[RMDB]
RNA sequence: GGGAACGACUCGAGUAGAGUCGAAAACAGCCCCCCUUUGGUCCUACUCCCCAAGAGGCCAAAUCCCCAGGGAGCUCAUGCUGUGGGGCUUUGAGCAAGCUCAUUACUGGCGCCAUUACUGCCCCGGAUACUAUAUACACUUCGGUGUAUAUAGUAUAAAAGAAACAACAACAACAAC
Reactivity to DMS in 0.01 (KOAc 150mM, MgCl2 10mM, bicine 150mM(pH8.5), 24C), signal-to-noise 9, nucleotides 027 to 126: c080a120g000c010c000c000c020c040c040u000u000u000g010g000u010c010c020u000a090c070u010c020c000c010c050a100a080g000a140g010g010c010c020a020a050a090u010c030c010c000c060a120g010g010g010a060g000c020u010c120a070u020g010c010u000g010u010g010g010g010g010c020u000u000u010g010a080g000c040a100a070g000c020u000c040a110u020u010a080c070u010g000g000c050g010c030c040a070u010u010a060c070u000g010c020c000c010c030g010g010
Reactivity to 2A3 in 0.01 (KOAc 150mM, MgCl2 10mM, bicine 150mM(pH8.5), 24C), signal-to-noise 9, nucleotides 027 to 126: c030a020g030c000c000c000c000c000c010u020u040u090g020g010u040c010c000u030a100c040u060c010c010c000c000a040a030g060a060g050g000c000c010a010a020a030u020c010c000c000c010a020g040g050g040a030g010c020u040c070a090u160g010c020u040g030u100g040g000g010g030c020u030u030u070g040a040g000c020a030a010g030c010u020c030a070u050u220a060c050u040g030g010c020g020c030c020a060u090u110a070c040u080g010c000c010c000c000g030g020
Structure probing data (DMS and 2A3) for a 177-nucleotide construct. The RNA was probed in 150 mM KOAc, 10 mM MgCl2 and 150 mM bicine (pH 8.5) at 24 C. It was measured as part of the RMDB libraries RFM100 and RFMREP. High DMS reactivity at an A or C suggests that its Watson-Crick edge is free.